An RNA of 177 nucleotides, treated with 2A3 and read out base by base. Reactivities are rounded to 0.1 and cut off at 0 and 3. It was measured as part of the RMDB library M2PK90. Conditions: 150 mM KOAc, 10 mM MgCl2 and 150 mM bicine (pH 8.5), 24 C. Reactivities are given for positions 27 through 126.
[RMDB]
RNA sequence: GGGAACGACUCGAGUAGAGUCGAAAAAUAAACAGCCUUAGCGUUUGUUUUCAUCCCAACAAAUAAUACGCGAGGUAACAAUGACUGUACGCGUAUUAAUCAGUCAAUAACGCUAAGGUAAAAAAAAUACCUAGUAAUCCUUCGGGAUUACUAGGUAAAAAGAAACAACAACAACAAC
Reactivity to 2A3 in 0.01 (KOAc 150mM, MgCl2 10mM, bicine 150mM(pH8.5), 24C), signal-to-noise 1, nucleotides 027 to 126: a000u160a010a110a050c030a020g000c010c000u030u000a020g040c030g020u010u050u040g050u020u170u270u140c060a130u070c020c020c040a000a010c010a000a090a000u130a000a000u040a030c020g000c010g000a040g030g270u100a070a010c040a050a040u100g070a050c020u040g000u050a060c000g000c000g010u020a000u010u030a000a100u050c000a000g050u000c030a020a080u100a070a000c000g000c000u000a010a010g000g010u020a080a010a000a000a000a000a000a000
For 2A3, 956 sequencing reads were counted.